[RMDB]
Chemical mapping of a 177-nucleotide RNA with DMS and 2A3. The RNA was probed in 150 mM KOAc, 10 mM MgCl2 and 150 mM bicine (pH 8.5) at 24 C. DMS adducts were read by reverse transcription with MarathonRT. The data come from the RNA Mapping Database (RMDB), libraries RFM100 and RFMREP. Values cover nucleotides 27 to 126.

RNA sequence: GGGAACGACUCGAGUAGAGUCGAAAAGAGAGCGACCCGUUAGCUGGCAGACAAUCCAGUCCCCAUCCCACGGCAACUGUGGAUGGGACUGGCUUUCUGCGCUCUUCAGAUCUCUGAAAAGAGUUGGGUCAACCGUAAAAUUCGUUUUACGGUUGACAAAAGAAACAACAACAACAAC
Reactivity to DMS in 0.01 (KOAc 150mM, MgCl2 10mM, bicine 150mM(pH8.5), 24C), signal-to-noise 4, nucleotides 027 to 126: g000a060g000a030g010c040g010a100c010c030c020g010u030u020a110g020c060u030g010g030c010a010g000a010c300a030a010u000c000c000a020g000u000c100c050c010c030a010u000c040c020c030a050c180g010g010c300a110a130c130u010g010u030g000g000a000u000g000g000g000a010c000u000g000g000c110u000u000u000c010u000g000c010g020c010u000c040u020u000c040a100g000a110u030c050u010c000u020g010a120a050a100a040g000a050g010u020u010g000g020
Reactivity to 2A3 in 0.01 (KOAc 150mM, MgCl2 10mM, bicine 150mM(pH8.5), 24C), signal-to-noise 6, nucleotides 027 to 126: g040a000g010a010g010c050g040a100c010c010c000g020u060u080a030g020c060u060g160g000c010a000g000a030c100a030a020u000c000c000a000g000u070c070c030c000c000a010u060c050c050c010a010c020g090g020c090a170a080c150u150g050u090g020g000a000u010g010g000g010a000c000u000g000g000c000u000u010u000c000u000g000c000g030c010u000c000u030u010c000a030g020a110u050c030u000c000u060g060a040a030a050a010g070a020g010u080u080g090g000